Background:
This 177-nucleotide RNA was probed chemically with 2A3 and DMS. The RNA was probed in 150 mM KOAc, 10 mM MgCl2 and 150 mM bicine (pH 8.5) at 24 C. The 2A3 profile rests on 1,408 reads. The data come from the RNA Mapping Database (RMDB), library M2PK50.
RNA sequence: GGGAACGACUCGAGUAGAGUCGAAAAGAGUAGUAGUUCGCUACUACUCAAAGGCACAAAACGCACAGUUCUAAAGUGCAUGGAACACGCCAAGUGCCCGUGAAAGUAAAUCCUUCGGGAUUUACAAAGUUGAGGAGCUAUUCGUAGCUCCUCAACUAAAAGAAACAACAACAACAAC
Reactivity to 2A3 in 0.01 (KOAc 150mM, MgCl2 10mM, bicine 150mM(pH8.5), 24C), signal-to-noise 1, nucleotides 027 to 126: g000a000g000u000a000g000u000a000g010u000u070c190g030c090u010a010c000u000a000c000u030c000a020a020a010g000g010c020a010c000a040a240a060a030c000g000c000a030c040a050g080u090u100c080u200a160a140a030g060u040g040c030a000u080g020g030a050a050c010a010c020g000c030c020a160a020g020u010g010c000c060c050g040u040g070a140a020a000g000u010a000a000a010u000c010c020u040u100c240g040g030g000a000u000u000u000a000c000a000a140
Reactivity to DMS in 0.01 (KOAc 150mM, MgCl2 10mM, bicine 150mM(pH8.5), 24C), signal-to-noise 2, nucleotides 027 to 126: g000a010g010u000a000g020u000a010g000u010u020c170g070c030u000a000c010u000a020c000u000c000a020a070a090g000g030c020a030c050a040a060a150a130c130g000c050a060c110a090g010u010u000c120u010a120a140a100g050u010g000c060a070u010g030g010a070a030c050a080c060g020c030c010a120a290g000u000g000c000c000c090g020u030g010a080a120a110g000u010a000a010a010u000c000c000u000u000c230g030g020g010a020u000u000u000a000c010a060a100